[RMDB]
RNA sequence: GGGAACGACUCGAGUAGAGUCGAAAACACUGCCGAGAAAAGCUUCUAGUGAGAAAACAAUGGCCCGUACCGCAAACCGACACAGGUAGUCGAGGAGAGAAUCCUAAGGUGAGCGAGAGAACUCUCGGCGUGUAUACGAAUUCGUUCGUAUACACGCAAAAGAAACAACAACAACAAC
Reactivity to 2A3 in 0.01 (KOAc 150mM, MgCl2 10mM, bicine 150mM(pH8.5), 24C), signal-to-noise 1, nucleotides 027 to 126: c010a010c040u090g000c010c000g050a040g050a050a180a020a000g000c020u080u040c010u110a070g040u030g090a110g080a050a160a050a040c050a090a240u060g020g000c000c030c040g040u080a090c010c040g000c010a010a060a040c030c000g030a020c020a010c020a120g040g050u020a020g080u050c030g010a040g000g070a040g010a020g040a070a060u030c010c000u040a100a010g090g000u040g050a010g000c030g000a050g000a000g010a090a020c030u000c000u000c000g020
Reactivity to DMS in 0.01 (KOAc 150mM, MgCl2 10mM, bicine 150mM(pH8.5), 24C), signal-to-noise 3, nucleotides 027 to 126: c040a090c100u000g030c010c020g000a050g000a080a180a140a160g000c060u010u000c040u000a070g030u000g000a080g000a080a070a070a080c090a090a100u000g000g010c050c040c050g040u000a160c080c020g010c030a040a140a090c060c030g000a040c050a050c120a110g020g000u000a070g020u000c040g020a090g000g010a070g010a110g000a120a090u000c020c010u000a070a100g010g040u010g010a230g020c040g000a060g010a060g010a080a090c090u000c020u000c020g000